[RMDB]
RNA sequence: GGGAACGACUCGAGUAGAGUCGAAAAGAACAGAUCAUGGCAGUCAUCGGCGAAUUCGCAACCAACGGCAACAACUCCAUCGUCGGCAACGUCCGCACCCUCACGGUCAGCAUGCGGGCCCGCCUGAAAAUGCCUACCUCUUCGGAGGUAGGCAUUUAAAAGAAACAACAACAACAAC
Reactivity to DMS in 0.01 (KOAc 150mM, MgCl2 10mM, bicine 150mM(pH8.5), 24C), signal-to-noise 2, nucleotides 027 to 126: g020a130a110c120a100g010a070u040c000a070u020g010g010c020a020g000u030c010a040u030c090g000g000c000g020a050a070u020u030c020g000c070a050a110c090c080a110a090c060g020g010c040a050a070c130a090a050c060u020c020c070a050u000c070g000u000c050g000g010c010a150a070c140g000u000c040c050g050c090a070c000c040c030u000c060a150c060g000g000u000c170a080g000c020a210u000g010c040g020g020g000c020c070c070g020c030c010u000g070a060
Reactivity to 2A3 in 0.01 (KOAc 150mM, MgCl2 10mM, bicine 150mM(pH8.5), 24C), signal-to-noise 2, nucleotides 027 to 126: g030a040a020c000a060g020a050u080c000a000u100g010g000c020a040g090u040c010a020u050c110g030g000c030g040a070a220u150u090c060g000c060a050a060c030c020a030a000c060g050g000c000a010a020c010a010a050c130u020c000c000a080u060c130g050u000c000g030g000c020a110a000c060g080u040c040c000g010c020a080c040c040c000u020c020a080c020g000g020u020c030a030g000c010a000u050g020c020g000g000g000c000c000c000g060c000c000u020g010a100